[RMDB]
RNA sequence: GGGAACGACUCGAGUAGAGUCGAAAAAUGAACGUGGUGGGCGUAAGUUAGUAGAAGAUCUAAUGGUACGCGGUGGGUAUUCGACUGUACUCGAAACCACCACCACCACCAAGUCGUUCCCACCGAAGCAUCAUUGAAGUUUCGACUUCAAUGAUGCAAAAGAAACAACAACAACAAC
Reactivity to 2A3 in 0.01 (KOAc 150mM, MgCl2 10mM, bicine 150mM(pH8.5), 24C), signal-to-noise 3, nucleotides 027 to 126: a000u190g040a050a010c030g030u020g020g020u000g010g020g000c000g000u010a020a010g000u010u030a010g000u040a030g090a300a020g030a050u040c000u020a010a010u030g240g020u080a010c010g000c040g030g000u010g000g000g000u120a230u010u090c020g010a010c040u090g090u210a020c010u010c020g000a040a020a020c000c000a000c000c000a000c000c020a000c020c000a020c010c000a000a010g000u020c010g000u010u000c010c000c010a000c010c000g030a080a010
Reactivity to DMS in 0.01 (KOAc 150mM, MgCl2 10mM, bicine 150mM(pH8.5), 24C), signal-to-noise 1, nucleotides 027 to 126: a070u010g000a070a010c170g040u000g000g010u000g000g000g060c020g000u060a180a300g030u000u000a070g030u000a130g000a190a110g000a090u000c000u000a050a000u000g000g010u000a000c000g020c000g010g060u000g000g000g040u000a170u000u000c000g010a010c050u000g000u020a020c110u000c000g000a010a030a160c020c030a020c050c020a220c150c080a050c030c010a000c000c090a130a020g000u000c000g000u000u000c000c000c000a080c110c140g000a020a160